[RMDB]
RNA sequence: GGGAACGACUCGAGUAGAGUCGAAAAGAUAUGGACAGCUUGUCGGGAGGAUGAAGCUCCGAAGAACGCUCUCGGAAACGAGAGCGGGAGGAGAUAAGUCCGAAGAACGACAAGCUGUCCUAAGUCAGAUUAUCUUGAUGUUCGCAUCAAGAUAAUCAAAAGAAACAACAACAACAAC
Reactivity to DMS in 0.01 (KOAc 150mM, MgCl2 10mM, bicine 150mM(pH8.5), 24C), signal-to-noise 3, nucleotides 027 to 126: g000a060u000a300u000g010g000a020c000a010g010c010u000u000g020u010c010g030g000g020a140g010g020a030u000g010a150a230g010c000u000c000c010g010a110a190g010a190a290c010g000c000u000c000u000c010g000g010a090a110a190c010g000a010g010a000g010c000g000g000g000a080g000g010a000g000a000u000a120a300g010u000c000c000g000a120a110g020a160a210c030g000a010c000a000a000g000c010u000g010u000c000c010u000a020a070g020u000c100a120
Reactivity to 2A3 in 0.01 (KOAc 150mM, MgCl2 10mM, bicine 150mM(pH8.5), 24C), signal-to-noise 1, nucleotides 027 to 126: g010a000u070a040u160g000g000a010c000a000g010c000u010u000g000u000c000g010g020g060a110g000g000a020u150g010a270a110g050c010u000c000c010g070a190a050g040a040a020c000g000c010u020c000u000c000g010g020a080a100a010c030g000a000g030a010g000c010g000g000g020a040g000g010a000g000a000u030a050a010g000u000c000c000g020a020a020g040a010a000c000g000a000c000a000a010g010c000u000g000u000c000c000u000a000a000g010u000c030a020

An RNA of 177 nucleotides, treated with DMS and 2A3 and read out base by base.
The RNA was probed in 150 mM KOAc, 10 mM MgCl2 and 150 mM bicine (pH 8.5) at 24 C.